[RMDB]
RNA sequence: GGGAACGACUCGAGUAGAGUCGAAAAAAUCAUAUUCAGACGAAUAGCAACUCUUCAGGAAGGAGGGCGCGAGAUGGAAUUAAAGCCUUUUAAUUUCCGUGGUCACGAUGUCAGAAUCAUUGUUGGAGAUGACGGGGAGCCACAGUGGGUGGGGCGAUAUAGUCACACAAUUCGUUGUGUGACUAUAAAAAGAAACAACAACAACAAC
Reactivity to DMS in 0.01 (KOAc 150mM, MgCl2 10mM, bicine 150mM(pH8.5), 24C), signal-to-noise 1, nucleotides 027 to 156: a010a050u010c060a120u010a100u010u000c030a160g020a130c100g000a060a100u000a080g020c030a090a070c020u000c030u000u030c070a140g010g030a090a110g000g000a030g050g010g030c040g050c050g010a080g030a060u020g000g030a060a080u000u000a020a090a110g000c080c100u000u010u010u010a010a060u000u000u000c010c020g030u010g000g010u000c050a110c080g050a150u010g020u030c050a150g010a190a040u000c050a080u010u000g000u000u000g000g020a140g010a110u000g010a020c080g020g000g000g000a150g060c000c010a040c010a080g060u000g010g030g080u000g020g020g050g010c000g020a060
Reactivity to 2A3 in 0.01 (KOAc 150mM, MgCl2 10mM, bicine 150mM(pH8.5), 24C), signal-to-noise 2, nucleotides 027 to 156: a000a000u140c060a040u080a060u140u040c020a020g130a160c030g040a110a080u080a080g070c020a040a090c040u020c050u200u130c070a040g010g010a040a010g000g030a060g010g000g000c040g000c030g080a040g000a040u050g020g010a020a000u050u050a070a060a090g090c030c020u060u090u010u100a030a090u050u040u030c030c010g040u010g000g050u100c040a000c090g030a080u090g050u080c050a010g060a140a080u020c000a020u010u240g040u060u090g020g000a030g000a110u030g010a020c000g010g000g010g000a040g030c010c020a040c010a000g050u090g060g030g000u040g000g000g010g020c030g000a020

The record gives the reactivity of an RNA of 207 nucleotides to DMS and 2A3.
For 2A3 the reverse transcriptase was SuperScript II with manganese.
The 2A3 profile rests on 1,000 reads.